[RMDB]
RNA sequence: GGGAACGACUCGAGUAGAGUCGAAAAGCUCGAGAGGCAGAGUCUCAAGGAGCCUCCAAUGGGCCUCACGUAUUCAUCUAGAUGGCGCUUCGGACAACGGCAUCACAUAAGAGAUGCAGCUCCUGACCAGUAAUGUGAUGUUCGCAUCACAUUACUGAAAAGAAACAACAACAACAAC
Reactivity to DMS in 0.01 (KOAc 150mM, MgCl2 10mM, bicine 150mM(pH8.5), 24C), signal-to-noise 3, nucleotides 027 to 126: g010c020u000c010g000a140g040a070g000g030c070a220g010a070g020u010c020u010c070a120a090g010g010a100g000c020c020u010c020c110a050a090u000g000g000g010c010c000u000c030a100c150g000u010a050u010u010c140a090u010c090u010a050g000a060u010g010g020c030g010c030u000u010c110g010g010a010c050a030a060c210g000g010c000a010u010c010a060c130a140u000a090a130g000a070g000a020u000g020c040a120g000c030u000c020c000u010g000a090c230
Reactivity to 2A3 in 0.01 (KOAc 150mM, MgCl2 10mM, bicine 150mM(pH8.5), 24C), signal-to-noise 3, nucleotides 027 to 126: g020c020u030c070g080a060g030a030g090g000c050a030g030a040g170u010c020u020c040a040a050g050g010a020g020c000c020u000c000c000a060a130u080g020g050g010c000c000u010c020a040c040g040u080a090u190u200c110a130u050c050u090a070g000a120u170g030g000c070g020c090u050u050c040g030g000a010c020a100a020c110g040g000c000a000u000c010a030c030a110u220a120a060g050a000g000a050u020g000c010a000g000c010u000c000c000u030g030a080c040

Source: RMDB library RFMREP, as collected in RNAgym. The record gives the reactivity of an RNA of 177 nucleotides to DMS and 2A3. Conditions: 150 mM KOAc, 10 mM MgCl2 and 150 mM bicine (pH 8.5), 24 C. The DMS profile rests on 2,099 reads. Values cover nucleotides 27 to 126.